[RMDB]
RNA sequence: GGGAACGACUCGAGUAGAGUCGAAAAGGCUCAGGAACGAGGAAUUGCUAGUAAUCGCGGACUCAUUAAGACGCGAUGAAUACGUCCCUGUUCUUUGUACACACCGCCCGUCGUUAUCGAAGAUGGAGAAUUUCAUGAUGUUCGCAUCAUGAAAUUCAAAAGAAACAACAACAACAAC
Reactivity to 2A3 in 0.01 (KOAc 150mM, MgCl2 10mM, bicine 150mM(pH8.5), 24C), signal-to-noise 2, nucleotides 027 to 126: g020g020c000u000c030a000g000g030a030a010c010g030a030g000g050a060a080u230u220g060c040u010a000g000u040a000a010u000c000g000c000g060g080a170c030u050c080a160u180u200a130a000g000a030c000g020c000g010a010u000g010a030a030u050a020c030g010u000c020c010c000u020g000u000u000c000u050u110u130g070u100a030c090a000c010a010c040c040g040c020c040c010g010u050c030g030u050u130a080u200c110g060a110a020g060a100u100g040g000a130
Reactivity to DMS in 0.01 (KOAc 150mM, MgCl2 10mM, bicine 150mM(pH8.5), 24C), signal-to-noise 3, nucleotides 027 to 126: g010g000c060u000c010a070g010g010a030a030c020g000a040g010g010a020a030u010u000g040c090u000a080g010u000a090a010u000c000g010c000g000g010a120c050u000c230a100u000u000a120a040g010a150c000g000c000g000a010u010g000a120a140u010a040c050g010u000c000c000c010u000g020u000u000c000u010u000u020g020u010a060c110a100c130a100c070c050g000c090c060c040g000u000c040g020u000u000a110u000c120g000a080a090g010a100u010g010g000a300
The data come from the RNA Mapping Database (RMDB), library RFMREP. An RNA of 177 nucleotides, treated with 2A3 and DMS and read out base by base. The reactions ran in a buffer of 150 mM KOAc, 10 mM MgCl2 and 150 mM bicine (pH 8.5), at 24 C. The DMS profile rests on 2,653 reads. For DMS the reverse transcriptase was MarathonRT.